An RNA of 207 nucleotides, treated with 2A3 and read out base by base.
The data come from the RNA Mapping Database (RMDB), library OK3TST.
For 2A3 the reverse transcriptase was SuperScript II with manganese.

RNA sequence: GGGAACGACUCGAGUAGAGUCGAAAAAAGAGGCGAUACAUGGCGAUCAGAUCAGCCUCCUCGUCCUCCAACGGCGAACCGUCGCAGGUCAGACCUUGUUCUUGCUUGAGGUGCUCGAAAGCCGCAUUGCGGUCAUUCUCCUGUGCAGUCUCCGAACCGAAUUUAAGGGGUUCGCCCCUUAAAUUCGAAAAGAAACAACAACAACAAC
Reactivity to 2A3 in 0.01 (KOAc 150mM, MgCl2 10mM, bicine 150mM(pH8.5), 24C), signal-to-noise 2, nucleotides 027 to 156: a010a020g030a000g020g010c020g000a040u140a180c070a070u120g000g050c020g020a060u070c050a050g040a230u020c080a040g000c000c000u060c000c020u030c040g120u150c010c000u030c010c020a120a050c060g020g000c020g020a070a060c050c000g090u140c040g000c020a020g020g030u040c090a020g030a080c020c010u080u090g040u130u090c080u170u190g050c000u060u080g030a010g070g000u060g040c010u000c120g060a050a040a020g010c000c050g000c170a230u060u300g000c000g020g000u020c010a050u120u000c020u000c020c000u010g010u000g010c040a040g080u050c030u000c060c020g060a060a060c110